[RMDB]
RNA sequence: GGGAACGACUCGAGUAGAGUCGAAAAAGCACCUCCUGUUAUAUAUAAUGACUUGUGAAGUUCAUCUCCUGAAUUAUGGAACGUCAUUGACAUUUUUUAUUCAACGAAGAGUUAACCACUCUUAAUAAUUCUAUAAGUUUUUCGAAACUUAUAGAAUAAAAGAAACAACAACAACAAC
Reactivity to DMS in 0.01 (KOAc 150mM, MgCl2 10mM, bicine 150mM(pH8.5), 24C), signal-to-noise 2, nucleotides 027 to 126: a080g010c110a070c070c020u010c050c030u000g000u030u020a060u050a100u020a060u000a110a070u000g010a010c050u010u020g010u030g000a070a030g030u000u020c020a030u020c130u030c090c140u010g000a050a040u010u010a020u060g000g000a050a100c140g000u000c010a010u000u000g010a050c060a020u000u020u020u030u000u010a100u070u030c040a050a070c230g000a020a060g000a010g000u010u010a070a110c040c130a150c020u010c000u000u010a040a070u010a060
Reactivity to 2A3 in 0.01 (KOAc 150mM, MgCl2 10mM, bicine 150mM(pH8.5), 24C), signal-to-noise 3, nucleotides 027 to 126: a000g050c010a040c010c000u030c010c000u010g040u200u010a070u010a010u010a010u060a140a050u040g040a020c020u100u120g070u070g170a070a040g020u100u050c020a070u040c060u070c070c020u040g070a080a070u180u060a110u210g050g050a010a030c020g020u020c000a060u010u060g030a010c020a020u100u090u050u030u150u220a090u130u170c070a080a010c030g130a020a050g000a000g020u020u010a020a000c000c020a010c020u000c000u000u000a020a010u070a080

An RNA of 177 nucleotides, treated with DMS and 2A3 and read out base by base. The DMS profile rests on 1,818 reads. The reactions ran in a buffer of 150 mM KOAc, 10 mM MgCl2 and 150 mM bicine (pH 8.5), at 24 C.